The record gives the reactivity of an RNA of 177 nucleotides to 2A3 and DMS.
The DMS profile rests on 20,289 reads.
The 2A3 profile rests on 28,736 reads.
DMS adducts were read by reverse transcription with MarathonRT.

RNA sequence: GGGAACGACUCGAGUAGAGUCGAAAAUUCCCUGACCACUUGUAUCUUAGGUGUGCAGUAGUUAUACAGCAUAUCAGGAUAAAGUUAAGCCUAACGGACAGGCGGGUCGGUUGCCGGAAAAGAAAAACGAGUAGUUGGAGUUCGCUCCAGCUACUCGAAAAGAAACAACAACAACAAC
Reactivity to 2A3 in 0.01 (KOAc 150mM, MgCl2 10mM, bicine 150mM(pH8.5), 24C), signal-to-noise 9, nucleotides 027 to 126: u020u010c000c000c020u040g010a010c000c000a010c010u070u040g270u130a010u010c010u020u040a150g000g010u010g000u000g000c040a030g000u050a010g010u050u130a160u050a300c050a000g000c000a010u010a000u020c000a000g010g010a010u000a010a020a000g010u030u140a130a030g000c000c000u050a170a020c010g010g010a010c010a000g000g000c000g020g000g000u000c000g010g040u070u100g010c000c000g080g050a020a090a020a010g140a020a040a010a020a010
Reactivity to DMS in 0.01 (KOAc 150mM, MgCl2 10mM, bicine 150mM(pH8.5), 24C), signal-to-noise 6, nucleotides 027 to 126: u010u000c000c000c020u010g010a010c020c010a120c000u000u020g020u010a010u000c000u000u010a150g010g010u000g000u000g010c010a100g040u000a020g010u060u090a100u010a000c010a080g010c000a010u000a000u000c000a050g000g010a010u000a030a000a000g010u010u030a110a110g000c000c010u000a130a180c040g000g000a040c040a050g000g000c010g000g000g000u000c010g000g000u050u020g000c010c010g000g000a110a080a070a100g020a060a050a080a140a160